Chemical mapping of a 177-nucleotide RNA with DMS and 2A3. DMS adducts were read by reverse transcription with MarathonRT. Source: RMDB library OK2TST, as collected in RNAgym.
[RMDB]
RNA sequence: GGGAACGACUCGAGUAGAGUCGAAAACAGAGCGCGGCGGUGCGCGAUUCCGCUUUUGCAACGCGCGAUCUCAACAAGGCUGCCGUUGCCGCGGCCAAGGCGCAGUUGCGCACGGCUGAACUGAACAAUUAUAGUGACCUUUCGAGGUCACUAUAAUAAAAGAAACAACAACAACAAC
Reactivity to DMS in 0.01 (KOAc 150mM, MgCl2 10mM, bicine 150mM(pH8.5), 24C), signal-to-noise 8, nucleotides 027 to 126: c060a120g010a080g020c300g000c020g000g010c000g010g030u000g000c010g020c010g000a040u000u000c280c010g010c020u010u010u010u010g000c020a030a030c010g010c140g020c020g000a040u000c040u000c090a110a130c260a140a090g000g000c030u000g000c000c040g010u000u000g010c020c130g020c090g010g020c090c080a070a040g000g010c020g010c200a070g000u000u000g010c000g000c010a020c030g000g010c010u000g000a070a050c040u000g000a110a100c200a090
Reactivity to 2A3 in 0.01 (KOAc 150mM, MgCl2 10mM, bicine 150mM(pH8.5), 24C), signal-to-noise 4, nucleotides 027 to 126: c020a020g080a030g080c100g000c010g040g010c040g080g010u020g000c010g000c020g010a010u040u000c050c000g020c000u050u060u080u130g020c020a030a070c010g070c000g010c010g040a100u020c050u030c070a060a200c050a110a050g080g000c030u050g010c020c020g010u020u040g010c020c020g090c050g050g000c020c020a020a020g020g000c000g000c020a030g000u030u050g000c000g000c000a000c020g140g000c010u020g020a050a030c030u040g020a070a020c050a100
High DMS reactivity at an A or C suggests that its Watson-Crick edge is free. For 2A3, 8,839 sequencing reads were counted.